[RMDB]
RNA sequence: GGGAACGACUCGAGUAGAGUCGAAAAGAUAAACCGCAAUGUUCAUCAGUGAUAAUGUCAUAUUAUACAUUAAUGACAACAGAUCUACAACUUGUUGACAUUAACAGAUCAUCACUUUUUUAAUAUCUUCUUGAGUGAUUCAUUCACUUAUUAAUCAGUAGGCGUAUUUAUUCGUAAAUACGCCUACAAAAGAAACAACAACAACAAC
Reactivity to DMS in 0.01 (KOAc 150mM, MgCl2 10mM, bicine 150mM(pH8.5), 24C), signal-to-noise 2, nucleotides 027 to 156: g020a060u000a040a080a160c070c080g040c110a090a140u000g020u000u000c040a040u000c090a060g050u000g000a050u000a010a090u010g000u000c090a140u000a130u010u010a080u000a130c050a070u000u000a000a000u000g000a120c000a040a050c070a060g000a060u020c030u010a150c190a100a060c070u000u000g040u000u000g000a200c000a040u000u000a020a050c050a140g010a120u000c020a030u000c020a000c030u010u000u000u000u000u050a030a130u000a050u000c030u000u000c050u000u000g010a090g030u000g010a070u000u000c080a130u000u000c000a050c040u000u000a100u000u000a020a080u000c060a220
Reactivity to 2A3 in 0.01 (KOAc 150mM, MgCl2 10mM, bicine 150mM(pH8.5), 24C), signal-to-noise 3, nucleotides 027 to 156: g030a020u100a010a120a010c000c000g030c070a130a070u110g050u130u140c050a090u010c020a010g010u010g050a050u040a150a080u100g050u060c050a050u070a100u300u190a140u100a080c010a000u010u060a060a000u030g020a020c000a000a000c010a010g080a080u060c050u160a100c130a110a060c100u120u130g010u020u030g020a030c000a050u020u030a060a000c030a080g100a090u120c040a000u040c010a030c000u020u060u070u030u030u070a090a150u160a160u100c080u190u040c020u120u060g040a010g000u000g030a010u070u240c080a110u070u040c010a030c010u000u030a020u040u130a110a070u160c100a050
Structure probing data (DMS and 2A3) for a 207-nucleotide construct.
For 2A3 the reverse transcriptase was SuperScript II with manganese.
The 2A3 profile rests on 1,342 reads.
The reactions ran in a buffer of 150 mM KOAc, 10 mM MgCl2 and 150 mM bicine (pH 8.5), at 24 C.
Values cover nucleotides 27 to 156.